Structure probing data (DMS and 2A3) for a 177-nucleotide construct. The RNA was probed in 150 mM KOAc, 10 mM MgCl2 and 150 mM bicine (pH 8.5) at 24 C.
RNA sequence: GGGAACGACUCGAGUAGAGUCGAAAACUCUGGAAGAUGUGCUGGAAAUCGUGCGUAUCGAGAAGCCGAAAGGCGUUAUCGUCCAGUACGGCGGUCAGACCCCGCUGAAACUGGCGCGCGCGCUGGACUGACGAGAAAUUUUCGAAUUUCUCGUCAGAAAAGAAACAACAACAACAAC
Reactivity to DMS in 0.01 (KOAc 150mM, MgCl2 10mM, bicine 150mM(pH8.5), 24C), signal-to-noise 4, nucleotides 027 to 126: c020u010c020u010g010g010a140a100g010a100u010g000u000g010c030u000g000g000a050a110a050u000c000g010u000g020c010g000u000a120u000c040g000a010g030a090a300g000c020c000g010a070a080a180g010g000c010g010u000u000a080u000c000g010u010c010c010a000g010u010a160c070g000g010c000g020g010u010c070a110g000a200c240c280c000c010g010c010u000g010a050a050a060c020u000g000g010c300g000c040g000c040g010c140g000c050u000g000g000a300
Reactivity to 2A3 in 0.01 (KOAc 150mM, MgCl2 10mM, bicine 150mM(pH8.5), 24C), signal-to-noise 1, nucleotides 027 to 126: c020u000c020u090g030g070a070a050g000a100u110g050u100g090c030u110g050g080a040a090a130u130c010g000u010g020c020g020u080a060u020c010g020a010g070a040a010g010c030c040g090a120a050a060g000g000c040g000u050u050a050u070c020g030u000c000c010a000g000u000a000c020g010g000c000g000g030u110c020a040g060a200c040c000c030c020g000c000u020g050a300a120a020c000u010g000g010c030g000c040g010c000g000c000g050c010u000g000g000a050
For DMS the reverse transcriptase was MarathonRT. The DMS profile rests on 2,783 reads. Source: RMDB library OK2TST, as collected in RNAgym. The 2A3 profile rests on 1,047 reads.